[RMDB]
Chemical mapping of a 177-nucleotide RNA with DMS and 2A3.
DMS adducts were read by reverse transcription with MarathonRT.
The RNA was probed in 150 mM KOAc, 10 mM MgCl2 and 150 mM bicine (pH 8.5) at 24 C.
It was measured as part of the RMDB library OK2TST.
For 2A3, 3,647 sequencing reads were counted.
High 2A3 reactivity points to a flexible backbone, as in loops and unpaired stretches.
Reactivities are rounded to 0.1 and cut off at 0 and 3.
2A3 adducts were read by reverse transcription with SuperScript II with manganese.

RNA sequence: GGGAACGACUCGAGUAGAGUCGAAAAAGGAUGCCUUCAACGCCCGUCUGGCGUUCUGGAUCGCCAAUCGAGACAACCAUGGCGUGAAAGUUAUUGGUAUUGAUGAAACCAUGGAGCAGUUCGAUACCUAUUGCAGAAACUUCGGUUUCUGCAAUAGAAAAGAAACAACAACAACAAC
Reactivity to DMS in 0.01 (KOAc 150mM, MgCl2 10mM, bicine 150mM(pH8.5), 24C), signal-to-noise 5, nucleotides 027 to 126: a050g010g010a020u000g010c040c000u000u000c110a050a050c030g000c010c010c290g020u010c150u000g010g010c010g020u000u000c090u010g010g000a140u000c030g010c030c030a080a090u000c060g010a070g010a080c140a110a120c040c020a040u000g010g030c020g010u000g000a150a080a090g000u000u000a080u020u010g010g010u000a080u010u000g020a110u010g000a160a150a060c000c010a040u000g000g010a060g020c180a110g010u000u000c020g000a080u000a110c150
Reactivity to 2A3 in 0.01 (KOAc 150mM, MgCl2 10mM, bicine 150mM(pH8.5), 24C), signal-to-noise 4, nucleotides 027 to 126: a000g110g010a050u090g120c010c000u040u040c060a060a040c020g020c010c050c020g240u100c160u170g020g000c000g020u030u040c010u030g010g000a020u030c020g000c020c010a010a050u080c070g040a020g030a150c030a040a020c030c020a030u020g000g000c060g040u050g030a050a060a020g060u100u080a120u110u110g120g030u060a100u090u140g110a120u050g030a100a030a010c000c020a040u050g030g010a040g050c050a020g040u070u060c010g000a010u040a100c000